RNA sequence: GGGAACGACUCGAGUAGAGUCGAAAAGGACCGAUUGGUCCGUGAUCGGGUAGGCGGGCGUGCCGAUGGGGCGGAAGCCGGGCCGUGAGGUCCGGUGGACCCGUCGGUAUUGCGGAUCCUGCCGGGAGUAGCAGCAUAGCCGGGUGAGAAUCCCGGCCAAACAAAAGCUCUUCGGAGCUUUUGUUUGAAAAGAAACAACAACAACAAC
Reactivity to DMS in 0.01 (KOAc 150mM, MgCl2 10mM, bicine 150mM(pH8.5), 24C), signal-to-noise 1, nucleotides 027 to 156: g020g010a050c000c010g000a220u010u000g000g000u000c000c000g000u000g000a070u000c050g030g010g000u000a020g010g000c080g000g030g040c020g020u000g020c010c000g000a040u030g020g010g010g030c020g040g000a140a300g010c000c000g010g010g010c000c000g010u000g000a300g060g030u010c000c000g000g030u010g020g000a060c030c010c010g030u000c000g040g000u000a010u000u030g020c030g030g000a260u000c020c000u000g000c000c020g000g000g010a170g040u010a100g000c060a080g000c080a140u000a160g040c000c010g010g000g000u000g020a280g010a280a090u000c000c000c000g000g010c020

An RNA of 207 nucleotides, treated with DMS and read out base by base. The reactions ran in a buffer of 150 mM KOAc, 10 mM MgCl2 and 150 mM bicine (pH 8.5), at 24 C. Reactivities are rounded to 0.1 and cut off at 0 and 3. It was measured as part of the RMDB library PDB130.